[RMDB]
RNA sequence: GGGAACGACUCGAGUAGAGUCGAAAAAGAUAUGGAUGGCGAGUAUUUGACAUGGCUCAAGUGGAGCUACAUCGGAAACGAUGUAGCGAAAUGAAGGCCAACAGCAAAUACGAGCCAUCCUAAGUCACAGUAUAAUGAACUUCGGUUCAUUAUACUGAAAAGAAACAACAACAACAAC
Reactivity to DMS in 0.01 (KOAc 150mM, MgCl2 10mM, bicine 150mM(pH8.5), 24C), signal-to-noise 7, nucleotides 027 to 126: a050g010a040u000a300u010g000g010a000u000g000g000c000g030a300g010u000a010u000u000u000g000a070c090a280u010g010g000c000u010c020a040a300g010u000g000g010a300g000c000u000a000c000a010u000c000g000g000a140a120a140c010g020a000u010g010u000a010g010c000g010a100a110a000u000g010a180a270g000g010c000c010a010a050c300a160g000c000a010a010a010u000a000c010g000a300g000c000c000a000u000c000c000u000a020a080g000u000c040a210
Reactivity to 2A3 in 0.01 (KOAc 150mM, MgCl2 10mM, bicine 150mM(pH8.5), 24C), signal-to-noise 3, nucleotides 027 to 126: a000g050a030u060a030u120g010g010a000u010g010g000c010g010a030g020u020a080u020u010u000g110a170c070a080u080g010g000c010u020c120a070a020g020u020g020g020a010g000c000u000a000c000a000u000c010g020g020a070a060a040c010g010a000u000g000u010a000g000c010g000a000a000a000u070g030a070a020g040g000c000c020a010a000c020a010g050c000a000a010a010u010a010c010g000a000g010c000c000a000u000c000c000u000a010a010g000u000c000a010
This 177-nucleotide RNA was probed chemically with DMS and 2A3.
In probing experiments dimethyl sulfate is read out at A N1 and C N3, which are open when not base-paired.
DMS adducts were read by reverse transcription with MarathonRT.